[RMDB]
RNA sequence: GGGAACGACUCGAGUAGAGUCGAAAAUCGAAUUGUAGGACAAGUUUACGGAGAACUAGAUAGAAUCUUUGCAGGUUUAUGCUUUAGCCUUUUACCACUUCAACUCUGGACCAGGUACCAACUUUGAAAUAUACCCUUUAAGAUCCUCUGGGCACAGCCCUGGUGGAAAAUUCGUUUUCCACCAGGGAAAAGAAACAACAACAACAAC
Reactivity to 2A3 in 0.01 (KOAc 150mM, MgCl2 10mM, bicine 150mM(pH8.5), 24C), signal-to-noise 1, nucleotides 027 to 156: u180c010g030a010a080u080u080g000u040a060g030g000a000c020a110a040g020u090u120u200a050c090g050g000a050g000a170a040c090u100a050g040a070u060a050g020a010a060u060c070u050u130u090g000c040a040g000g060u070u160u100a050u090g010c040u060u010u090a010g000c000c020u000u120u040u100a070c090c010a100c040u160u050c060a100a090c030u000c030u060g000g030a040c000c000a020g040g020u020a040c000c000a020a050c000u070u090u150g010a000a020a000u120a010u050a050c000c000c000u060u050u040a100a020g010a060u000c000c000u000c040u020g000g000g000c030a010c080a050g040
Reactivity to DMS in 0.01 (KOAc 150mM, MgCl2 10mM, bicine 150mM(pH8.5), 24C), signal-to-noise 1, nucleotides 027 to 156: u010c080g000a080a080u020u010g040u010a070g040g000a030c050a080a140g000u000u000u000a170c120g000g000a070g010a060a050c040u000a080g020a120u020a160g050a110a160u030c040u010u000u040g020c140a100g050g020u000u030u010a060u010g020c030u020u000u010a110g020c020c020u000u020u000u000a100c000c050a080c070u000u010c080a010a060c000u000c020u000g000g060a060c050c000a060g070g000u000a040c000c070a040a100c050u000u000u020g020a050a040a110u020a190u000a050c060c010c020u000u000u000a030a140g010a080u010c020c020u000c050u020g000g000g050c050a030c080a100g000
Structure probing data (2A3 and DMS) for a 207-nucleotide construct. It was measured as part of the RMDB library OK3TST. The DMS profile rests on 1,521 reads. For 2A3, 786 sequencing reads were counted.